This 177-nucleotide RNA was probed chemically with 2A3 and DMS. Source: RMDB library OK1LIB, as collected in RNAgym.
RNA sequence: GGGAACGACUCGAGUAGAGUCGAAAAGAAGUGGCAGGGACAUGCCCCACAAGCUCGUUCUAGCAACAUAUGUUUGGCUAGUUCGAGCGAUUAGUCUCGAGGAGCGUCCUCUCGCCUCUUAACGAGAGGGUGGCAUACUAUUCGUAGUAUGCCACCCAAAAGAAACAACAACAACAAC
Reactivity to 2A3 in 0.01 (KOAc 150mM, MgCl2 10mM, bicine 150mM(pH8.5), 24C), signal-to-noise 4, nucleotides 027 to 126: g150a020a020g040u040g030g000c020a010g050g000g000a020c040a060u220g060c010c000c000c000a050c010a040a020g020c000u000c000g050u010u000c000u000a000g020c010a010a120c040a120u300a130u200g200u130u190u090g130g040c000u000a000g000u000u000c010g000a000g000c010g000a020u010u060a000g050u030c040u030c150g040a230g010g000a150g030c040g010u000c010c000u020c010u020c090g030c020c000u000c040u050u020a070a060c050g010a020g030a030
Reactivity to DMS in 0.01 (KOAc 150mM, MgCl2 10mM, bicine 150mM(pH8.5), 24C), signal-to-noise 1, nucleotides 027 to 126: g000a040a070g000u000g000g000c000a140g030g000g000a000c040a180u000g030c030c000c030c040a060c170a100a270g000c010u000c000g000u020u040c000u010a000g010c000a010a060c000a180u010a240u050g050u000u050u030g050g000c010u000a000g010u000u000c010g000a000g000c010g000a000u050u030a000g020u050c130u000c110g020a060g040g030a150g010c040g000u000c010c060u060c010u000c040g040c060c000u010c010u000u000a000a070c110g000a010g000a180